This 207-nucleotide RNA was probed chemically with 2A3. High 2A3 reactivity points to a flexible backbone, as in loops and unpaired stretches. The reactions ran in a buffer of 150 mM KOAc, 10 mM MgCl2 and 150 mM bicine (pH 8.5), at 24 C. The 2A3 profile rests on 829 reads.
[RMDB]
RNA sequence: GGGAACGACUCGAGUAGAGUCGAAAAGUCCGCAGUAUGACGUUAAACUGCUGACUCAUACAUACUGACACCGGUUGCUCAACAGGCUGUGUGGGACAAUAGAAUAACAAGGCUGUCAAUUUGAGCUAAAACUCCUCGGGGUUCGCCCCGAGGAGAAGUCUGCUAGAUUGUUCGCAAUCUAGCAGACAAAAGAAACAACAACAACAAC
Reactivity to 2A3 in 0.01 (KOAc 150mM, MgCl2 10mM, bicine 150mM(pH8.5), 24C), signal-to-noise 2, nucleotides 027 to 156: g000u010c000c010g020c040a000g000u010a020u140g050a030c050g040u020u050a070a100a020c030u030g000c010u010g010a030c030u010c020a040u050a160c010a020u080a030c040u060g040a010c040a010c050c010g170g020u050u160g020c030u000c040a010a120c010a080g170g000c040u040g050u000g010u040g080g020g000a010c030a030a040u090a080g260a120a040u130a100a000c020a080a000g080g000c030u020g040u090c030a040a080u020u070u070g020a010g040c030u050a100a000a080a200c000u010c010c000u000c010g010g040g000g000u060u010c070g150c000c090c000c010g000a000g000g000a000g000a000a000